Background: An RNA of 177 nucleotides, treated with DMS and read out base by base. Reactivities are rounded to 0.1 and cut off at 0 and 3. The DMS profile rests on 3,116 reads.
[RMDB]
RNA sequence: GGGAACGACUCGAGUAGAGUCGAAAAGAUAUGGACGGUGUUAGCUCGAUAAGCUCGGGUUCGGAAACGAACCCGAGCUUUUGACGAGCUUACACCGUCCUAAGUCAAACGUCAGUUCGCUGACGAACAUCUAAGACCUGUUCGCAGGUCUUAGAUGAAAAGAAACAACAACAACAAC
Reactivity to DMS in 0.01 (KOAc 150mM, MgCl2 10mM, bicine 150mM(pH8.5), 24C), signal-to-noise 3, nucleotides 027 to 126: g000a060u000a300u000g000g000a020c010g020g020u000g010u000u000a020g030c000u000c000g020a160u000a020a020g030c010u010c000g020g000g030u000u000c010g010g010a110a120a250c000g000a000a030c000c000c010g010a000g010c010u000u000u000u000g010a200c130g000a000g010c000u000u000a000c000a000c010c000g010u000c000c000u000a000a050g000u000c030a100a140a250c030g010u010c020a000g000u000u020c300g020c000u000g010a010c010g000a120a220

Source information
It was measured as part of the RMDB library TTRDES. In probing experiments dimethyl sulfate is read out at A N1 and C N3, which are open when not base-paired. Conditions: 150 mM KOAc, 10 mM MgCl2 and 150 mM bicine (pH 8.5), 24 C. For DMS the reverse transcriptase was MarathonRT.